[RMDB]
RNA sequence: GGGAACGACUCGAGUAGAGUCGAAAAUACCGCAGGCCUGCGGUGCGGCAGUGUGGAGACCUGCCGUAAGCCGUGUUGUUUUGACAACCGGGAGAAAGCGUAUGUGGAGGCAGCGCUUUCAGGGUCUAAAAGUAUGGGAUCUUCGGAUCCCAUACAACUCUCUAUGACCCUUCGGGGUCAUAGAGAGAAAAGAAACAACAACAACAAC
Reactivity to 2A3 in 0.01 (KOAc 150mM, MgCl2 10mM, bicine 150mM(pH8.5), 24C), signal-to-noise 1, nucleotides 027 to 156: u080a010c000c000g000c000a020g000g000c010c020u030g020c030g000g020u000g020c000g020g010c000a000g000u010g010u080g260g090a090g030a080c000c000u000g000c000c000g000u000a010a010g030c000c020g090u150g020u090u010g010u000u150u110u300g080a010c000a000a000c000c000g000g000g000a020g000a000a000a000g000c010g000u030a290u300g080u080g040g080a040g140g000c000a000g010c000g000c000u000u000u000c000a000g000g000g030u000c020u010a000a010a030a120g000u000a000u000g000g000g000a000u000c010u010u060c150g050g000a000u000c010c000c000a010u000a000c000a000a000

Structure probing data (2A3) for a 207-nucleotide construct. Source: RMDB library M2RFPK, as collected in RNAgym.